Chemical mapping of a 177-nucleotide RNA with 2A3 and DMS.
The 2A3 profile rests on 792 reads.
Conditions: 150 mM KOAc, 10 mM MgCl2 and 150 mM bicine (pH 8.5), 24 C.
Values cover nucleotides 27 to 126.
Source: RMDB library OK2TST, as collected in RNAgym.
RNA sequence: GGGAACGACUCGAGUAGAGUCGAAAAAUCAUAGAUCUACCAAUGCAGUUGGGGACCAUAACUGAUGUGCAUAUCGGAUCAGAUUAGACUAAAAAUCCCUUGCUCUUUACGGUCUUGGGUACCAGUAGUUUGAAGGGUGAUUCGUCACCCUUCAAACAAAAGAAACAACAACAACAAC
Reactivity to 2A3 in 0.01 (KOAc 150mM, MgCl2 10mM, bicine 150mM(pH8.5), 24C), signal-to-noise 1, nucleotides 027 to 126: a010u090c060a090u130a080g020a050u040c020u020a010c070c000a010a020u040g000c010a020g010u010u050g010g040g020g060a050c060c090a080u030a210a030c000u050g000a010u010g040u040g230c070a030u080a070u220c060g040g040a030u050c010a000g060a030u030u050a030g020a060c110u150a060a000a000a000a150u010c010c000c000u030u080g040c020u010c010u050u150u060a060c050g050g000u060c040u020u040g070g000g000u010a010c020c010a050g050u070a030
Reactivity to DMS in 0.01 (KOAc 150mM, MgCl2 10mM, bicine 150mM(pH8.5), 24C), signal-to-noise 2, nucleotides 027 to 126: a010u000c020a130u000a120g000a000u000c030u010a180c200c090a100a020u020g010c070a100g020u000u010g010g010g060g010a130c130c100a130u000a130a100c010u000g020a020u000g030u000g020c090a060u000a070u000c120g000g000a030u010c030a020g010a070u010u000a100g010a120c130u010a020a050a040a080a230u000c000c010c010u000u000g030c020u000c010u000u020u000a090c120g010g000u000c000u000u000g000g020g060u010a060c020c080a140g020u010a110